[RMDB]
This 177-nucleotide RNA was probed chemically with DMS and 2A3. Values are in units of 0.01, from 0 to 300, in steps of 10. The RNA was probed in 150 mM KOAc, 10 mM MgCl2 and 150 mM bicine (pH 8.5) at 24 C.
RNA sequence: GGGAACGACUCGAGUAGAGUCGAAAAGUGUGAUUGUUCGCAAUCACACAAAGAUGGAAAGCCAGCAUGAAGGCUAACCAUCAAAAUACAUGCAAACAAAAAAAAGAUUUGGCUUCGGCCAAAUCAACUGAAUAAUUAACUUCGGUUAAUUAUUCAGAAAAGAAACAACAACAACAAC
Reactivity to DMS in 0.01 (KOAc 150mM, MgCl2 10mM, bicine 150mM(pH8.5), 24C), signal-to-noise 2, nucleotides 027 to 126: g000u000g030u010g000a000u000u000g010u000u000c290g040c000a010a010u000c000a000c010a000c000a020a090a130g000a050u000g000g000a040a300a080g000c010c000a120g020c190a170u010g010a260a130g000g000c000u010a030a300c000c000a020u000c010a050a050a080a140u010a100c160a060u000g000c100a100a050a110c060a050a000a010a140a030a060a230a160g010a000u000u000u000g020g000c010u010u010c240g010g020c010c000a000a000a000u000c010a030a100
Reactivity to 2A3 in 0.01 (KOAc 150mM, MgCl2 10mM, bicine 150mM(pH8.5), 24C), signal-to-noise 2, nucleotides 027 to 126: g000u000g000u000g000a000u010u010g010u040u030c090g000c090a000a000u010c000a000c000a000c010a010a000a020g000a000u010g000g030a070a030a010g000c020c000a010g110c110a200u210g120a200a070g000g000c000u010a010a000c000c000a000u000c000a000a000a000a100u130a020c040a020u140g110c030a020a140a090c060a030a150a130a030a030a010a000a080g010a000u010u000u000g000g000c000u030u080c300g100g000c000c000a010a000a000u000c000a000a000